Conditions: 150 mM KOAc, 10 mM MgCl2 and 150 mM bicine (pH 8.5), 24 C.
This 177-nucleotide RNA was probed chemically with DMS and 2A3.
For 2A3, 14,375 sequencing reads were counted.

[RMDB]
RNA sequence: GGGAACGACUCGAGUAGAGUCGAAAAGAUAUGGACCCAAAGCUUUUGACGCGAGUUCGGAAACGAAUUCGCGAUAAGCUUGUGGGUCCUAAGUCAAAACAUAACAACACUUCGGUGUUGUUAUGAAGUAAGGGUAUUACUUCGGUAAUACCCUUACAAAAGAAACAACAACAACAAC
Reactivity to DMS in 0.01 (KOAc 150mM, MgCl2 10mM, bicine 150mM(pH8.5), 24C), signal-to-noise 5, nucleotides 027 to 126: g000a030u000a150u010g000g000a020c000c000c000a030a010a010g010c000u000u010u000u010g020a180c030g000c000g010a020g020u000u000c000g010g000a050a040a100c000g010a020a010u000u000c010g010c000g010a020u000a030a030g020c000u010u000g010u010g010g010g010u000c000c000u000a000a060g000u000c030a110a070a120a260c010a010u000a000a000c000a000a000c000a010c000u000u010c180g020g000u000g000u000u000g000u000u000a000u000g010a070a110
Reactivity to 2A3 in 0.01 (KOAc 150mM, MgCl2 10mM, bicine 150mM(pH8.5), 24C), signal-to-noise 6, nucleotides 027 to 126: g010a000u020a020u090g000g010a010c000c000c000a000a000a010g010c040u140u230u300u300g150a050c010g000c000g000a000g010u000u000c000g000g000a020a020a010c000g000a000a010u010u000c010g000c000g000a000u020a000a010g000c000u080u090g300u090g210g000g000u000c000c000u000a010a000g010u010c000a000a030a060a120c010a000u000a010a010c000a010a000c000a000c020u080u130c300g130g000u010g000u010u000g000u000u000a000u000g000a040a000